Conditions: 150 mM KOAc, 10 mM MgCl2 and 150 mM bicine (pH 8.5), 24 C. Structure probing data (DMS and 2A3) for a 177-nucleotide construct. The 2A3 profile rests on 3,812 reads.

RNA sequence: GGGAACGACUCGAGUAGAGUCGAAAAGAUAUGGAUCAACUCGAGGAACUACUGGUGAUGGUCGGAAACGACCAUUGCCAGCCUAAGACAGGUUGAUCCUAAGUCAAAACCAAGCUUCGGCUUGGAAGUUUUAACUGUGGUUCGCCACAGUUAAAACAAAAGAAACAACAACAACAAC
Reactivity to DMS in 0.01 (KOAc 150mM, MgCl2 10mM, bicine 150mM(pH8.5), 24C), signal-to-noise 3, nucleotides 027 to 126: g000a030u000a300u000g020g010a030u000c000a020a010c000u010c050g000a100g020g000a070a090c090u020a270c010u000g000g030u010g010a000u000g010g000u000c000g010g000a070a090a170c010g020a000c000c000a000u000u000g010c000c000a000g020c030c020u000a120a090g020a070c300a050g000g010u000u020g000a020u000c000c010u000a000a060g000u020c020a110a140a170a160c000c000a000a000g000c000u000u020c170g030g010c000u000u000g000g000a020a030
Reactivity to 2A3 in 0.01 (KOAc 150mM, MgCl2 10mM, bicine 150mM(pH8.5), 24C), signal-to-noise 2, nucleotides 027 to 126: g000a000u050a010u180g010g000a000u000c010a000a000c030u040c170g090a130g040g050a100a090c100u300a120c010u300g000g000u010g010a000u010g000g020u000c000g010g000a020a050a040c020g000a000c000c010a000u000u010g010c000c010a000g000c000c010u160a200a020g050a000c040a020g000g000u000u000g000a000u000c000c000u000a030a000g010u000c000a010a010a110a220c010c010a000a000g010c000u090u240c300g120g020c020u010u010g000g030a020a030

DMS adducts were read by reverse transcription with MarathonRT.